[RMDB]
RNA sequence: GGGAACGACUCGAGUAGAGUCGAAAAUCUCCGUGAUUCGUCACGGAGAAACAAAAAUAAAAUGGGUUCAACUCCCACCCUUUUCCGAGGGUAUCGGAAACCAACCUUCGCUCUUCGGAGCGAAGAAGAUAAGUUAUAUAUUCGUAUAUAACUUAUCAAAAGAAACAACAACAACAAC
Reactivity to DMS in 0.01 (KOAc 150mM, MgCl2 10mM, bicine 150mM(pH8.5), 24C), signal-to-noise 3, nucleotides 027 to 126: u010c000u000c000c000g030u000g000a020u000u010c190g030u010c010a000c000g000g000a010g000a010a070a070c020a020a080a080a130a100u020a070a020a070a080u000g000g000g010u000u010c230a060a300c160u000c010c000c020a240c000c010c000u000u000u000u000c010c010g030a010g000g000g010u000a040u000c010g000g000a020a010a090c220c050a030a060c100c000u000u000c000g020c000u000c010u000u000c220g040g000a000g000c010g010a000a000g020a030a040
Reactivity to 2A3 in 0.01 (KOAc 150mM, MgCl2 10mM, bicine 150mM(pH8.5), 24C), signal-to-noise 4, nucleotides 027 to 126: u000c000u000c000c000g000u000g000a010u040u090c200g020u010c110a000c010g000g010a000g010a010a020a000c000a010a030a010a010a010u220a040a110a010a070u040g010g000g010u080u120c020a030a030c050u010c010c000c000a010c000c000c000u020u110u020u000c000c010g010a000g020g050g080u100a030u020c010g000g000a000a010a010c030c020a020a060c010c010u010u010c000g000c010u010c000u030u070c230g090g000a000g000c010g000a000a000g000a000a000

Source information: Chemical mapping of a 177-nucleotide RNA with DMS and 2A3. Values are in units of 0.01, from 0 to 300, in steps of 10. The DMS profile rests on 2,206 reads. The data come from the RNA Mapping Database (RMDB), library M2PK50.